[RMDB]
Source: RMDB library RFM100, as collected in RNAgym. An RNA of 177 nucleotides, treated with 2A3 and DMS and read out base by base. The 2A3 profile rests on 1,766 reads. The RNA was probed in 150 mM KOAc, 10 mM MgCl2 and 150 mM bicine (pH 8.5) at 24 C.
RNA sequence: GGGAACGACUCGAGUAGAGUCGAAAACUGCCCGCCUGGAGUCGCAUUGAGAGGAUUCCACUACGCUGCCUCUAUUAUUAUACCGUAAAUCUCUUUAAAUUCUGGAACUAAUUACGUAGAGGAUAUGAUGACUUUUUUUGUUCGCAAAAAAAGUCAUAAAAGAAACAACAACAACAAC
Reactivity to 2A3 in 0.01 (KOAc 150mM, MgCl2 10mM, bicine 150mM(pH8.5), 24C), signal-to-noise 4, nucleotides 027 to 126: c060u100g030c000c000c020g020c000c040u070g010g010a020g020u050c030g010c170a080u110u240g070a110g000a010g080g100a010u040u000c020c000a030c040u080a000c060g050c060u030g020c010c010u000c000u000a020u090u020a020u100u070a050u080a110c020c000g020u060a030a030a260u030c080u000c000u100u160u110a070a180a130u180u030c020u090g010g020a020a040c020u010a090a040u090u080a050c100g000u010a040g000a030g050g000a010u000a090u120g100
Reactivity to DMS in 0.01 (KOAc 150mM, MgCl2 10mM, bicine 150mM(pH8.5), 24C), signal-to-noise 1, nucleotides 027 to 126: c100u060g020c030c000c000g010c090c080u050g000g000a010g040u000c010g010c110a130u020u050g010a080g010a080g010g010a080u080u000c000c000a050c070u020a020c080g010c030u020g000c000c000u000c010u000a080u020u040a040u000u000a070u010a160c040c000g020u010a040a110a030u000c050u000c040u010u000u020a080a020a140u000u000c110u020g010g050a090a060c110u010a060a050u000u010a050c120g020u000a010g020a000g000g000a140u070a080u000g030